This 177-nucleotide RNA was probed chemically with DMS and 2A3. The reactions ran in a buffer of 150 mM KOAc, 10 mM MgCl2 and 150 mM bicine (pH 8.5), at 24 C. For 2A3, 2,129 sequencing reads were counted. Source: RMDB library OK1LIB, as collected in RNAgym.
RNA sequence: GGGAACGACUCGAGUAGAGUCGAAAAAGAUGAAGACGGCAAUCCAUUGAAAGGCGCCGAUUUAAACAGAGCUGUUGCGACGAUCCUCUAGUAAGUUUCUGUUACUCGGGAUUCGAUUUAUGGAUGAAUUUACGUACGCAUUCGUGCGUACGUAAAUAAAAGAAACAACAACAACAAC
Reactivity to DMS in 0.01 (KOAc 150mM, MgCl2 10mM, bicine 150mM(pH8.5), 24C), signal-to-noise 4, nucleotides 027 to 126: a050g020a080u030g010a060a050g010a110c050g000g010c100a060a060u010c020c010a070u020u020g010a040a060a140g010g010c290g000c000c000g000a100u010u020u010a080a080a060c060a050g000a070g000c010u000g010u010u020g010c040g010a120c110g000a070u010c040c040u000c040u010a100g010u020a060a040g000u020u010u000c060u020g000u000u000a050c130u010c140g010g000g000a070u000u010c010g000a150u010u000u010a050u010g010g000a030u020g010a150
Reactivity to 2A3 in 0.01 (KOAc 150mM, MgCl2 10mM, bicine 150mM(pH8.5), 24C), signal-to-noise 4, nucleotides 027 to 126: a010g030a010u130g080a050a030g080a020c030g020g030c020a030a120u040c000c020a010u070u200g130a120a060a030g110g000c050g000c040c010g020a000u040u070u080a100a050a050c040a010g020a020g050c030u050g090u300u180g010c050g050a020c030g020a060u100c010c020u110c040u020a010g030u020a100a000g000u010u100u040c040u020g080u050u050a040c020u000c020g000g020g000a050u130u070c020g070a080u020u080u120a050u070g020g040a030u070g040a110